[RMDB]
RNA sequence: GGGAACGACUCGAGUAGAGUCGAAAACUCCCAUCCAACUCCUAUUCCAACACGUCCUCGUCGUACAGAGUGGUGACAUGUGUCACCACAUAUCCAAGCUUGGGUACACGGGCUUGACCCAACCCCUAAAACAGAGACGAGUUCGCUCGUCUCUGAACAUCCAUUCCUACUUCGGUAGGAAUGGAUGAAAAGAAACAACAACAACAAC
Reactivity to DMS in 0.01 (KOAc 150mM, MgCl2 10mM, bicine 150mM(pH8.5), 24C), signal-to-noise 1, nucleotides 027 to 156: c060u000c000c000c040a180u020c110c040a140a160c020u000c020c020u010a060u000u010c020c020a110a070c080a070c040g000u000c000c020u020c020g030u000c020g030u000a140c130a150g000a240g090u000g020g000u000g020a060c010a230u000g030u010g030u000c010a010c020c000a020c000a020u000a020u000c030c000a010a180g020c040u010u000g030g010g000u000a070c070a030c070g010g020g020c030u000u010g020a270c000c000c020a060a060c000c000c000c030u000a000a100a090a290c030a010g000a030g010a020c010g000a110g060u000u020c300g000c000u000c010g050u010c010u000c000u000g010a060a110
Reactivity to 2A3 in 0.01 (KOAc 150mM, MgCl2 10mM, bicine 150mM(pH8.5), 24C), signal-to-noise 3, nucleotides 027 to 156: c020u030c000c000c000a030u100c020c020a040a040c040u010c000c010u030a070u040u010c010c000a020a030c050a030c080g080u040c050c040u090c070g090u060c030g050u100a080c040a060g140a040g090u010g000g000u000g010a010c050a130u300g220u100g000u050c000a010c030c000a000c010a010u030a000u000c030c010a020a020g020c060u120u120g040g020g010u030a020c010a010c050g000g000g000c040u160u100g110a210c000c000c000a000a090c030c000c000c000u080a010a120a000a060c010a000g000a000g000a000c010g010a000g000u030u020c160g040c040u000c000g000u000c000u000c000u000g010a000a000